[RMDB]
RNA sequence: GGGAACGACUCGAGUAGAGUCGAAAAGAUAUGGACCCACCCACCUUUUGACGAGCCUCUUCGGAAACGAAGAGAAGCUCGAUAAGGUGUGUGGGUCCUAAGUCAAAGGUUCCGUUCGCGGAACCAACGGUUAUAUAAUGUUCGCAUUAUAUAACCGAAAAGAAACAACAACAACAAC
Reactivity to 2A3 in 0.01 (KOAc 150mM, MgCl2 10mM, bicine 150mM(pH8.5), 24C), signal-to-noise 4, nucleotides 027 to 126: g020a020u060a030u130g000g000a000c000c010c000a000c030c060c000a010c000c020u070u130u150u300g300a130c040g000a000g010c000c010u000c010u010u020c010g010g020a080a040a030c010g000a010a000g000a000g010a040a010g000c010u000c000g000a010u030a040a040g000g000u000g000u000g000u000g000g000g000u000c010c000u000a000a010g000u000c010a010a030a070g020g000u000u000c050c010g010u030u060c300g000c000g080g000a000a010c000c000a000a010
Reactivity to DMS in 0.01 (KOAc 150mM, MgCl2 10mM, bicine 150mM(pH8.5), 24C), signal-to-noise 6, nucleotides 027 to 126: g010a050u000a300u010g000g000a040c000c000c000a010c000c060c000a000c010c010u000u000u010u010g010a230c120g000a020g020c010c000u010c000u000u000c000g010g000a100a110a260c000g020a030a010g000a010g000a060a100g030c000u000c000g010a080u000a020a020g000g030u000g010u000g010u000g000g000g010u000c000c000u000a010a070g010u000c040a100a140a160g020g010u000u000c000c000g020u000u010c220g020c020g010g000a010a010c000c010a020a060

The data come from the RNA Mapping Database (RMDB), library TTRDES. Chemical mapping of a 177-nucleotide RNA with 2A3 and DMS. For DMS the reverse transcriptase was MarathonRT.